[RMDB]
RNA sequence: GGGAACGACUCGAGUAGAGUCGAAAAGAUAUUACUCUGGCAACUUGGAAUCAGUUCUCGGAUACGUAUCUGAUAUGCAUACUAAACUCGCAUCAAUAACUCAAUUAGUUAUUGCCAAGAUAGAAACCGGUGGAUAAAAUUUCGAUUUUAUCCACCGAAAAGAAACAACAACAACAAC
Reactivity to 2A3 in 0.01 (KOAc 150mM, MgCl2 10mM, bicine 150mM(pH8.5), 24C), signal-to-noise 1, nucleotides 027 to 126: g020a000u050a000u130u110a040c070u000c020u050g030g000c020a040a040c030u020u080g030g180a140a120u170c080a060g020u050u060c020u000c000g000g040a060u020a060c020g000u030a030u060c010u040g050a020u040a030u110g000c030a050u040a300c000u220a150a150a040c050u110c150g000c020a020u040c000a020a020u010a010a020c000u000c090a000a300u130u150a100g000u000u020a010u010u000g000c000c000a070a050g040a080u060a120g200a180a050a010c030
Reactivity to DMS in 0.01 (KOAc 150mM, MgCl2 10mM, bicine 150mM(pH8.5), 24C), signal-to-noise 1, nucleotides 027 to 126: g000a060u000a040u000u000a220c290u000c010u040g000g050c170a040a070c000u000u000g010g020a190a100u000c150a000g030u000u000c000u000c000g000g020a020u010a120c200g010u000a020u000c030u010g020a080u000a020u010g000c000a080u010a080c090u020a060a100a050c150u030c140g010c030a060u000c030a000a030u000a010a010c000u000c190a040a270u020u010a070g000u000u000a010u000u000g010c020c030a070a080g000a110u000a100g000a120a120a150c300
Source information
Chemical mapping of a 177-nucleotide RNA with 2A3 and DMS. The data come from the RNA Mapping Database (RMDB), library OK2TRN. The 2A3 profile rests on 740 reads.